[RMDB]
RNA sequence: GGGAACGACUCGAGUAGAGUCGAAAAAGUGCGACACGAGGAGUUCUUCGCCAACCUCGUUACGCACUGCCUGGACUACACGCGUGACGAGACGAUCGCGGCGAUCGCCGCCCGUGCCGCCGACCUCACACUUUAGGUCAUUCGUGACCUAAAGUGUAAAAGAAACAACAACAACAAC
Reactivity to DMS in 0.01 (KOAc 150mM, MgCl2 10mM, bicine 150mM(pH8.5), 24C), signal-to-noise 4, nucleotides 027 to 126: a080g030u000g030c000g010a040c090a020c010g000a070g020g020a140g010u010u000c060u000u010c030g030c050c030a200a200c060c000u000c010g000u000u000a080c000g020c010a050c100u000g000c040c060u000g010g020a090c130u020a080c150a030c130g000c030g010u010g010a010c010g010a050g000a100c130g010a090u010c230g010c190g010g010c060g010a040u000c070g010c070c040g000c040c040c010g010u000g020c040c000g010c010c020g000a080c020c030u010c170
Reactivity to 2A3 in 0.01 (KOAc 150mM, MgCl2 10mM, bicine 150mM(pH8.5), 24C), signal-to-noise 3, nucleotides 027 to 126: a020g120u140g010c020g010a020c020a010c020g020a200g020g000a050g040u080u080c020u050u010c030g020c000c010a050a050c010c010u010c000g000u000u010a010c000g000c010a030c030u010g050c000c080u110g050g070a140c060u130a090c170a020c120g000c000g010u010g020a010c000g000a010g030a050c060g050a070u180c100g010c100g110g000c000g010a030u070c050g010c040c020g070c000c000c000g010u000g010c010c010g010c000c000g040a060c000c010u080c010

An RNA of 177 nucleotides, treated with DMS and 2A3 and read out base by base. The RNA was probed in 150 mM KOAc, 10 mM MgCl2 and 150 mM bicine (pH 8.5) at 24 C.